Overview: Chemical mapping of a 207-nucleotide RNA with 2A3 and DMS. The data come from the RNA Mapping Database (RMDB), library RNAMAK. The RNA was probed in 150 mM KOAc, 10 mM MgCl2 and 150 mM bicine (pH 8.5) at 24 C. The DMS profile rests on 2,474 reads.
[RMDB]
RNA sequence: GGGAACGACUCGAGUAGAGUCGAAAAGGGGUCAUAUUGUCAGCAGUGAUAGCUGAGCUUGGAUUUAUACAGCUGAAGCCUCCACGGCUGUAUUGUCAGCUCCGAAGCUGCUUGGAUUUAUAUGACGGAGGCACCCAAACUCCGAUUCGUCGGAGAAGGAAAUGUAGAACUUCGGUUCUACAUUUCCAAAAGAAACAACAACAACAAC
Reactivity to 2A3 in 0.01 (KOAc 150mM, MgCl2 10mM, bicine 150mM(pH8.5), 24C), signal-to-noise 4, nucleotides 027 to 156: g130g000g040g000u000c000a000u010a000u010u080g030u030c000a010g000c020a000g020u030g180a250u190a160g090c200u090g030a000g000c030u090u180g130g010a030u070u300u100a030u090a010c010a000g000c000u040g030a200a020g030c000c000u000c010c000a010c010g010g000c000u000g010u000a010u010u030g020u030c040a020g000c000u000c030c040g090a120a010g000c000u000g000c010u010u070g020g000a010u040u300u110a070u040a000u010g000a010c040g000g000a000g000g020c000a040c000c000c000a040a060a100c000u000c010c000g010a020u050u060c120g010u000c000g150g010a010g000a040a070
Reactivity to DMS in 0.01 (KOAc 150mM, MgCl2 10mM, bicine 150mM(pH8.5), 24C), signal-to-noise 1, nucleotides 027 to 156: g010g040g030g010u000c030a060u010a030u000u000g020u000c030a030g030c030a060g040u000g010a180u010a190g020c150u000g010a030g060c040u000u000g030g030a080u000u000u000a030u000a080c040a020g000c000u030g020a050a070g060c030c010u000c020c010a300c000g020g000c010u000g020u000a000u000u010g000u000c060a070g020c010u030c040c080g060a110a300g010c010u000g000c030u000u030g000g010a080u010u010u010a060u000a040u010g010a110c010g010g040a030g060g080c030a140c020c030c010a030a120a170c030u000c000c000g030a160u010u000c210g040u000c030g000g010a040g010a200a230